[RMDB]
RNA sequence: GGGAACGACUCGAGUAGAGUCGAAAAGAUAAAUUACUGGGUCCCAAACUAAAUAAACCCAAAGAUAUUAAAGUAUGCUGGAAGACAAUGUUACCUGGUGGUUUAUAAGACCUUCUUGCAAAGCUGGGAUUUAGCAGGGUUUCGACCCUGCUAAAUCAAAAGAAACAACAACAACAAC
Reactivity to DMS in 0.01 (KOAc 150mM, MgCl2 10mM, bicine 150mM(pH8.5), 24C), signal-to-noise 1, nucleotides 027 to 126: g000a300u040a030a040a060u010u040a060c120u020g000g000g050u010c080c090c020a060a090a150c110u020a080a110a050u050a040a030a080c010c020c000a040a220a120g070a070u050a040u010u090a100a150a040g010u000a010u030g000c000u010g000g000a000a110g000a040c120a080a110u000g000u000u000a020c050c010u000g040g000u020g000g010u000u000u000a040u010a010a080g000a110c130c010u000u000c030u000u000g000c000a080a000a080g000c010u000g030g000
Reactivity to 2A3 in 0.01 (KOAc 150mM, MgCl2 10mM, bicine 150mM(pH8.5), 24C), signal-to-noise 3, nucleotides 027 to 126: g030a060u260a040a080a060u120u130a050c110u060g000g000g000u050c060c010c000a060a000a000c020u080a040a010a160u070a010a150a060c010c000c030a030a060a000g070a020u160a040u200u290a090a130a020g100u050a050u050g020c010u050g020g000a020a020g020a030c040a050a090u220g040u200u040a010c000c000u030g060g030u090g080g070u010u070u010a040u050a150a010g050a050c000c000u070u000c010u000u000g000c050a050a060a110g050c040u110g060g080
The data come from the RNA Mapping Database (RMDB), library OK1LIB. The record gives the reactivity of an RNA of 177 nucleotides to DMS and 2A3. The 2A3 profile rests on 1,110 reads. The reactions ran in a buffer of 150 mM KOAc, 10 mM MgCl2 and 150 mM bicine (pH 8.5), at 24 C.